[RMDB]
RNA sequence: GGGAACGACUCGAGUAGAGUCGAAAAUAGCACAUAUCAGUCGGAUAAUCGUGCAAGUUGAUCGUUUCGGCGGUCUAAUUUGGCGGUGCCAUCAGGAUUUACUCGCACAUUGUGUUCGUUCCCUCGGGGACGAGUGUGUAUCCUGAACCACAUUUUUGAACUAUGUUACCUUCGGGUAACAUAGUUCAAAAGAAACAACAACAACAAC
Reactivity to 2A3 in 0.01 (KOAc 150mM, MgCl2 10mM, bicine 150mM(pH8.5), 24C), signal-to-noise 1, nucleotides 027 to 156: u090a000g090c020a010c000a020u040a030u110c050a100g220u190c090g090g000a090u050a220a000u050c050g000u060g260c020a030a000g020u020u000g000a020u030c010g010u060u000u060c210g120g010c030g050g020u020c110u140a000a000u000u030u010g030g000c030g020g050u010g000c000c030a110u040c070a020g000g060a020u020u080u130a180c160u110c090g020c000a010c000a030u060u120g010u020g000u150u040c030g020u010u000c030c000c000u040c160g000g000g000g020a000c020g000a040g030u010g000u010g040u010a030u000c000c030u020g050a080a050c070c000a050c080a160u030u020u020u040u020